[RMDB]
RNA sequence: GGGAACGACUCGAGUAGAGUCGAAAAUCUGGCAGCACGUCCUGAAUCCGGAGCAUAAAUACGAUCCGAAAUCACAUUUAAUUGCGGGAGGACUUGCCGGCGGAUUGGCAGCUGCUUUAACGACUCAACGAUUAUAAUCAUUCGUGAUUAUAAUCGUAAAAGAAACAACAACAACAAC
Reactivity to 2A3 in 0.01 (KOAc 150mM, MgCl2 10mM, bicine 150mM(pH8.5), 24C), signal-to-noise 9, nucleotides 027 to 126: u030c010u020g040g010c000a000g000c010a010c130g040u040c010c020u040g120a080a040u010c000c010g030g040a060g030c050a050u090a130a110a020u170a110c080g040a070u030c050c020g050a090a070a040u120c050a040c020a110u110u180u180a200a190u140u140g020c010g020g010g010a040g000g020a020c000u030u040g010c010c000g060g020c020g010g020a030u030u040g030g000c020a040g000c020u050g000c000u040u070u060a100a030c040g040a030c010u010c060a030
Reactivity to DMS in 0.01 (KOAc 150mM, MgCl2 10mM, bicine 150mM(pH8.5), 24C), signal-to-noise 9, nucleotides 027 to 126: u000c070u010g000g020c010a090g010c010a070c120g010u000c010c030u010g020a120a100u010c030c010g030g000a120g010c070a080u000a060a060a090u010a120c170g000a080u010c050c110g010a070a080a100u000c040a090c080a050u000u010u010a070a110u000u010g010c020g010g010g010a100g000g000a040c050u000u000g010c010c020g010g010c020g000g000a040u000u000g010g020c050a110g010c030u010g010c020u000u000u010a060a100c090g000a120c090u000c110a130